[RMDB]
RNA sequence: GGGAACGACUCGAGUAGAGUCGAAAAACUGACGGUACGCCGUCAGAACGGUAGAAAAGAUGGUUUGAAAACCACGCCUUCUACCGAUAUAGUAAAUAAAUAGGCGGAGCGGUCAUACGUGACCGCAAAAACAUCCUUGGCUUCGGCCAAGGAUGAAGCAUAAGCUAUCCUUCGGGAUAGCUUAUGCAAAAGAAACAACAACAACAAC
Reactivity to 2A3 in 0.01 (KOAc 150mM, MgCl2 10mM, bicine 150mM(pH8.5), 24C), signal-to-noise 1, nucleotides 027 to 156: a000c000u000g010a000c000g000g020u050a030c200g010c040c010g010u010c000a000g000a010a000c000g010g000u000a000g030a020a010a010a010g050a300u020g000g060u050u130u210g130a160a100a000a000c000c000a000c000g030c020c000u000u000c000u020a000c000c000g000a000u000a000u020a070g090u040a020a020a170u130a100a140a040u250a020g020g000c000g000g040a020g030c000g010g000u000c010a010u020a110c200g080u060g020a000c000c000g000c000a010a010a000a000a000c000a000u000c000c000u000u000g000g010c010u030u060c180g170g000c010c000a000a000g000g000a000u000g000a000a000